Background: Conditions: 150 mM KOAc, 10 mM MgCl2 and 150 mM bicine (pH 8.5), 24 C. Structure probing data (DMS and 2A3) for a 177-nucleotide construct. For DMS, 30,909 sequencing reads were counted. It was measured as part of the RMDB library OK2TST.

RNA sequence: GGGAACGACUCGAGUAGAGUCGAAAAUCGUUGCCCUUACUAGUGUAAGCGUAACGGCAUCUAGGUUUGCACGUCUUGGAGGAAACGGUGUGUACGUUUCUAGUGUUUACGCCGUAUCGGUUCCGGCACUAUUCACCUAGUUCGCUAGGUGAAUAGUAAAAGAAACAACAACAACAAC
Reactivity to DMS in 0.01 (KOAc 150mM, MgCl2 10mM, bicine 150mM(pH8.5), 24C), signal-to-noise 9, nucleotides 027 to 126: u000c020g010u000u000g010c010c040c010u000u000a010c020u010a160g020u020g020u000a020a020g020c300g010u000a030a030c040g010g010c170a060u000c050u000a090g010g010u000u010u000g010c070a070c080g010u000c060u000u000g010g010a120g000g000a040a060a030c010g000g010u000g020u010g010u010a050c030g010u000u000u010c120u010a100g010u000g010u000u000u000a050c060g020c010c010g010u000a060u000c080g010g010u000u000c030c010g010g020c160
Reactivity to 2A3 in 0.01 (KOAc 150mM, MgCl2 10mM, bicine 150mM(pH8.5), 24C), signal-to-noise 9, nucleotides 027 to 126: u040c010g010u000u020g040c020c020c000u020u020a050c100u120a090g180u040g010u300a020a020g010c000g020u010a020a010c000g010g000c010a030u030c050u080a080g100g030u030u080u110g060c060a030c050g040u020c050u090u180g080g020a090g010g020a050a060a020c010g010g010u070g020u030g030u080a030c030g020u020u090u060c050u040a060g020u010g030u080u060u050a030c030g000c010c010g020u040a080u100c050g080g000u040u010c010c000g020g020c020